[RMDB]
RNA sequence: GGGAACGACUCGAGUAGAGUCGAAAAGAAUCUAAUCGGAGGGUAGUCUCGUUCGGGCAACACGCAGUGCGGUGCUUGAUGUGCCGUCCUCUGUUGAAACAUAUAAAGCUCGGAGAAAGUAUAGUGGAAUGAGGAGUGAGUUCGCUCACUCCUCAUUAAAAGAAACAACAACAACAAC
Reactivity to 2A3 in 0.01 (KOAc 150mM, MgCl2 10mM, bicine 150mM(pH8.5), 24C), signal-to-noise 3, nucleotides 027 to 126: g040a010a040u070c050u100a120a050u050c030g140g020a020g010g090g010u040a110g050u090c000u010c080g150u010u060c060g010g040g000c030a100a120c060a040c150g030c000a000g020u000g020c000g000g030u030g000c000u060u240g130a070u240g030u010g000c000c010g040u050c000c000u040c000u000g020u020u160g040a040a030a000c110a010u140a010u050a150a120a000g020c020u030c010g000g000a000g060a000a060a000g160u100a040u130a120g160u130g060g160
Reactivity to DMS in 0.01 (KOAc 150mM, MgCl2 10mM, bicine 150mM(pH8.5), 24C), signal-to-noise 3, nucleotides 027 to 126: g010a080a050u010c010u010a050a030u000c020g010g010a150g000g030g020u010a060g000u010c000u000c040g030u000u010c030g020g010g020c020a100a090c100a070c160g020c080a020g040u000g000c000g020g000u000g020c020u000u030g020a080u030g030u010g030c020c000g020u000c130c030u000c040u030g020u000u010g020a170a100a170c170a060u000a100u030a070a150a150g020c010u010c020g020g010a050g000a080a060a020g010u000a020u010a070g020u010g020g010